[RMDB]
This 177-nucleotide RNA was probed chemically with 2A3 and DMS. Values cover nucleotides 27 to 126. Reactivities are rounded to 0.1 and cut off at 0 and 3. The reactions ran in a buffer of 150 mM KOAc, 10 mM MgCl2 and 150 mM bicine (pH 8.5), at 24 C.

RNA sequence: GGGAACGACUCGAGUAGAGUCGAAAACUGCUCUCGUUCGCGAGAGCAGAAAUAAUAAACGCUAGAAAACGAUCAAAACUAGCCAAAUACAUAACGAUCGAAAAAGAAGUCACUUCGGUGACUUCAACUAACUCCAAGGGUUCGCCCUUGGAGUUAGAAAAGAAACAACAACAACAAC
Reactivity to 2A3 in 0.01 (KOAc 150mM, MgCl2 10mM, bicine 150mM(pH8.5), 24C), signal-to-noise 1, nucleotides 027 to 126: c010u010g000c010u000c000u000c020g010u030u040c150g000c000g130a000g000a010g030c000a000g010a000a000a000u010a000a020u070a020a130a000c050g040c010u000a000g000a000a170a030a120c030g020a010u040c050a020a060a030a080c010u010a000g050c000c010a150a110a080u200a070c110a050u100a130a000c070g000a000u050c000g060a050a000a050a070a050g010a010a000g000u000c000a000c010u040u140c200g050g020u000g000a000c000u000u010c010a010a000
Reactivity to DMS in 0.01 (KOAc 150mM, MgCl2 10mM, bicine 150mM(pH8.5), 24C), signal-to-noise 1, nucleotides 027 to 126: c000u000g010c000u000c040u000c000g040u000u000c280g030c010g030a030g000a000g000c000a010g000a000a050a020u000a110a160u000a030a060a070c240g010c000u000a000g010a090a020a040a030c030g000a010u000c050a110a140a160a060c000u000a000g000c050c140a120a250a070u000a110c230a090u030a100a140c110g000a040u000c010g030a120a080a110a150a080g010a010a030g000u000c000a000c000u010u000c070g000g000u000g000a010c000u010u000c000a020a050